[RMDB]
RNA sequence: GGGAACGACUCGAGUAGAGUCGAAAAUACGUCACGGUAGGUUUCGUCUUGCUGUGCGUACGUUGCACACCAAUUAUAGUGGAGCUUUUUGGUUAAGUACUUCCCCCUUGCGAGCAACAGGUGUCGUGCCGUUAGGUUGUUUCGACAACCUAACGGCAAAAGAAACAACAACAACAAC
Reactivity to 2A3 in 0.01 (KOAc 150mM, MgCl2 10mM, bicine 150mM(pH8.5), 24C), signal-to-noise 1, nucleotides 027 to 126: u040a000c010g060u110c150a000c010g040g000u030a050g050g000u140u250u240c150g060u110c000u000u130g000c020u000g000u070g000c000g000u070a040c010g040u040u070g000c090a120c000a000c030c020a010a030u140u200a130u070a090g060u040g070g010a040g000c040u080u070u000u000u020g120g000u090u040a140a130g020u020a090c000u000u000c000c000c030c000c000u000u090g000c070g050a040g000c000a000a040c060a010g190g000u030g040u070c000g060u020
The record gives the reactivity of an RNA of 177 nucleotides to 2A3.